An RNA of 177 nucleotides, treated with 2A3 and DMS and read out base by base.
RNA sequence: GGGAACGACUCGAGUAGAGUCGAAAAGAUAUGGAAGUACUCCGACGAAGUACACUACCCACCUCGGAAACGAGAGGUGUACAGAGGAGCGGCUUCCUAAGUCAAAACACUUGGUUCGCCAAGUGAAGUACAAUGGAGUGUUCGCACUCCAUUGUACAAAAGAAACAACAACAACAAC
Reactivity to 2A3 in 0.01 (KOAc 150mM, MgCl2 10mM, bicine 150mM(pH8.5), 24C), signal-to-noise 3, nucleotides 027 to 126: g000a000u060a020u090g000g000a000a000g000u000a010c010u000c010c020g300a300c020g000a160a010g000u000a000c000a010c010u150a140c060c160c090a200c170c010u010c010g040g000a050a020a030c000g000a010g000a030g040g000u010g020u000a000c000a020g000a010g010g000a000g040c100g190g000c110u010u000c010c000u020a030a010g030u030c040a010a020a130a140c020a010c000u010u020g000g060u060u080c230g030c090c000a000a010g010u020g060a050a030
Reactivity to DMS in 0.01 (KOAc 150mM, MgCl2 10mM, bicine 150mM(pH8.5), 24C), signal-to-noise 3, nucleotides 027 to 126: g010a030u000a130u000g000g000a000a000g000u000a100c000u000c000c000g020a180c270g010a060a080g010u000a000c000a000c000u000a090c190c150c100a300c260c010u000c000g000g000a050a010a080c010g020a010g000a090g020g010u000g010u000a000c000a020g000a050g010g000a010g000c020g000g000c000u000u010c000c000u000a020a070g000u000c030a120a050a070a170c010a010c000u000u000g000g000u000u020c230g020c000c000a020a000g000u010g000a050a070
Conditions: 150 mM KOAc, 10 mM MgCl2 and 150 mM bicine (pH 8.5), 24 C. Reactivities are given for positions 27 through 126. Source: RMDB library TTRDEL, as collected in RNAgym. DMS adducts were read by reverse transcription with MarathonRT.